RNA sequence: GGGAACGACUCGAGUAGAGUCGAAAAUCAAUGGGCUUUGCCCAGACUUUUGAGAGUAGUGAUGACCUCUCAGCCCCUCCACCUUGGGGUGCCCUAUCCGAGCACUGCUGUUUCGGUAGAAAGGCUAUCAGUAUUGACACUUCGGUGUCAAUACUGAAAAAGAAACAACAACAACAAC
Reactivity to 2A3 in 0.01 (KOAc 150mM, MgCl2 10mM, bicine 150mM(pH8.5), 24C), signal-to-noise 1, nucleotides 027 to 126: u040c070a000a110u020g020g030g000c050u260u160u300g000c030c000c000a020g010a050c060u190u050u040u020g000a010g000a000g000u050a020g070u030g250a110u110g080a060c000c000u050c000u010c010a010g020c010c100c000c000u000c070c060a100c050c010u020u060g010g000g000g010u000g000c020c000c010u010a030u020c000c030g010a000g020c000a060c230u300g150c020u060g150u080u300u080c030g020g000u000a000g070a020a070a000g000g000c000u010a010
Reactivity to DMS in 0.01 (KOAc 150mM, MgCl2 10mM, bicine 150mM(pH8.5), 24C), signal-to-noise 1, nucleotides 027 to 126: u000c060a140a100u000g010g000g030c010u010u000u010g030c020c000c000a050g010a120c140u000u020u000u000g010a010g000a020g020u000a070g020u020g020a100u010g000a130c230c000u000c010u000c010a030g010c000c000c000c000u000c170c100a250c120c100u020u010g000g000g010g030u030g000c010c010c010u010a180u000c040c010g010a000g010c020a080c210u010g000c290u010g010u000u000u010c010g000g020u000a060g000a040a090a090g000g010c040u000a090